An RNA of 177 nucleotides, treated with 2A3 and DMS and read out base by base. For DMS the reverse transcriptase was MarathonRT. Source: RMDB library M2PK50, as collected in RNAgym. 2A3 adducts were read by reverse transcription with SuperScript II with manganese.
[RMDB]
RNA sequence: GGGAACGACUCGAGUAGAGUCGAAAAAGUAUCGGGUUCGCCCGAUACUAGAGCACCACACCUGCGGGAGUUAAGGCCAAACGCACAGGCGGGUGCAAAGCCAACUCAAGGGUUUCGACCCUUGAAAAUAAUGAAUAACAUUCGUGUUAUUCAUUAUAAAAGAAACAACAACAACAAC
Reactivity to 2A3 in 0.01 (KOAc 150mM, MgCl2 10mM, bicine 150mM(pH8.5), 24C), signal-to-noise 5, nucleotides 027 to 126: a000g010u010a000u010c000g010g020g040u030u060c200g060c020c000c000g000a000u000a000c000u000a000g000a020g010c000a010c010c000a110c000a010c030c000u010g000c040g030g030g010a130g040u110u180a140a050g180g030c020c020a080a090a020c030g000c010a030c030a070g030g000c030g030g000g000u000g000c000a000a050a000g040c010c010a040a030c040u010c020a000a000g020g010g010u010u050u110c160g090a050c000c000c000u010u000g000a010a010a000
Reactivity to DMS in 0.01 (KOAc 150mM, MgCl2 10mM, bicine 150mM(pH8.5), 24C), signal-to-noise 9, nucleotides 027 to 126: a020g010u000a000u000c000g010g010g010u000u010c250g020c000c000c000g000a000u000a000c000u000a030g000a260g010c020a020c010c010a120c030a050c020c030u000g010c030g000g000g010a300g010u000u010a080a100g010g010c150c050a050a110a150c070g010c030a040c050a030g000g020c300g000g000g010u000g010c010a060a040a130g010c020c030a080a110c200u000c010a000a000g000g000g000u000u000u010c160g000a040c000c000c000u000u000g000a010a050a100